[RMDB]
RNA sequence: GGGAACGACUCGAGUAGAGUCGAAAAGAUAUGGAACUCCGUCAGGCGACGAUCAUACGAUCGGAAACGAUCGUUAUGGGAGCCUCCCGGAGUUCCUAAGUCAAACCCACCCCUUCGGGGGUGGGAACAUCUGGUGUUAGUUCGCUAACACCAGAUGAAAAGAAACAACAACAACAAC
Reactivity to DMS in 0.01 (KOAc 150mM, MgCl2 10mM, bicine 150mM(pH8.5), 24C), signal-to-noise 2, nucleotides 027 to 126: g000a050u000a300u000g010g000a030a000c000u000c000c000g050u000c120a020g040g040c010g010a080c300g000a060u010c000a010u000a010c000g010a020u000c000g000g000a090a060a230c000g000a020u000c000g020u010u010a000u000g000g020g010a080g000c010c010u000c070c090c010g020g000a040g000u010u000c000c000u000a000a070g010u010c040a130a140a240c010c010c030a010c020c000c000c000u000u010c190g000g020g010g010g020u000g000g010g000a020a060
Reactivity to 2A3 in 0.01 (KOAc 150mM, MgCl2 10mM, bicine 150mM(pH8.5), 24C), signal-to-noise 1, nucleotides 027 to 126: g020a040u040a070u130g020g000a020a020c010u020c010c000g030u050c070a030g000g030c000g050a300c040g000a180u020c000a000u010a020c020g010a010u000c020g020g020a150a050a040c010g000a000u020c000g070u170u150a000u030g020g000g030a000g000c040c000u010c030c000c010g000g000a010g000u000u000c000c000u000a020a000g010u010c000a020a000a230c000c000c000a000c030c000c010c030u030u130c300g180g000g000g040g020u000g000g000g010a010a010